[RMDB]
RNA sequence: GGGAACGACUCGAGUAGAGUCGAAAAACGAUGUCGUUCGCGACAUCGUAAAUUGUAUAACCUUGCUUGAUGUCUACUUGGUUGUAAAGCGAGACAAGUCAGUGAGAGUCCUAUUCGUAGGACUCAAAGUAACACGGAUGUUCGCAUCCGUGUUACUAAAAGAAACAACAACAACAAC
Reactivity to 2A3 in 0.01 (KOAc 150mM, MgCl2 10mM, bicine 150mM(pH8.5), 24C), signal-to-noise 2, nucleotides 027 to 126: a000c000g000a000u010g010u000c010g000u000u040c140g000c020g100a020c020a000u010c000g000u000a000a000a040u050u040g090u010a130u030a140a070c000c000u030u030g060c000u020u100g050a040u090g090u060c040u030a020c030u130u080g160g070u070u110g080u230a030a030a020g050c070g010a020g030a020c010a010a060g050u040c070a040g050u000g200a110g000a000g060u020c000c000u010a010u020u000c220g050u010a000g000g020a000c020u000c000a000a000
Reactivity to DMS in 0.01 (KOAc 150mM, MgCl2 10mM, bicine 150mM(pH8.5), 24C), signal-to-noise 3, nucleotides 027 to 126: a050c010g010a020u000g020u010c010g030u000u000c230g010c010g000a010c000a010u000c010g030u000a010a040a100u010u000g010u010a090u000a140a150c040c010u000u000g000c020u010u000g010a040u010g010u000c030u000a060c050u010u000g000g000u010u020g040u020a080a030a060g020c130g000a050g020a080c040a040a070g000u010c100a050g000u000g010a160g000a020g010u000c020c000u000a010u010u020c160g030u000a010g000g000a010c010u000c000a000a040